[RMDB]
RNA sequence: GGGAACGACUCGAGUAGAGUCGAAAAGAUAUGGAAACAGCGAUCAUGUCUACUCAAAGCAACAGCUAUAGGUCGGAAACGACCUGAUAGACAUGCUUUAGUAGACAUGAUCGCUGUUUCCUAAGUCCAUAAGCGCAUAGUUCGCUAUGCGCUUAUGAAAAGAAACAACAACAACAAC
Reactivity to DMS in 0.01 (KOAc 150mM, MgCl2 10mM, bicine 150mM(pH8.5), 24C), signal-to-noise 3, nucleotides 027 to 126: g000a120u000a300u000g000g000a010a010a000c010a000g020c000g010a020u000c000a010u000g000u010c000u000a000c000u000c300a000a000a000g010c000a050a110c300a220g000c010u000a000u000a020g000g020u000c000g000g000a110a110a240c010g010a010c000c010u000g000a000u000a010g020a040c100a240u000g000c000u000u010u000a000g010u010a000g000a000c000a000u000g000a000u000c000g000c010u000g000u000u000u000c000c000u000a010a070g000u010c030